[RMDB]
RNA sequence: GGGAACGACUCGAGUAGAGUCGAAAAACGGUGCGGAAGUUCGCGCUUCCGUGAAACGCGAAAAUCGGACGGUGGCUGCAAGUCGCAUAGCAAAACCGCGGCAAGUGGAGUUAGCGAGAGGAGGCUGAAACCAUCCAACACUUCGGUGUUGGAUGAACUGGCAUACCAUGUUCGCAUGGUAUGCCAGAAAAGAAACAACAACAACAAC
Reactivity to 2A3 in 0.01 (KOAc 150mM, MgCl2 10mM, bicine 150mM(pH8.5), 24C), signal-to-noise 1, nucleotides 027 to 156: a000c010g000g050u070g000c020g000g010a040a000g010u090u140c040g010c030g010c060u030u000c000c000g030u030g020a140a070a000c120g000c030g100a020a000a020a170u190c090g030g020a040c030g010g000u010g010g000c050u060g000c040a030a070g090u000c000g040c030a030u080a060g010c030a060a010a040a000c060c040g000c020g040g020c040a070a050g040u020g050g040a000g040u070u110a000g000c020g010a030g000a000g060g020a030g000g050c050u080g000a110a020a020c010c000a000u000c010c000a000a000c000a000c000u000u110c160g060g000u030g000u020u000g000g000a000u000g000a000a000
Source: RMDB library M2RFPK, as collected in RNAgym. Structure probing data (2A3) for a 207-nucleotide construct. 2A3 adducts were read by reverse transcription with SuperScript II with manganese. Conditions: 150 mM KOAc, 10 mM MgCl2 and 150 mM bicine (pH 8.5), 24 C.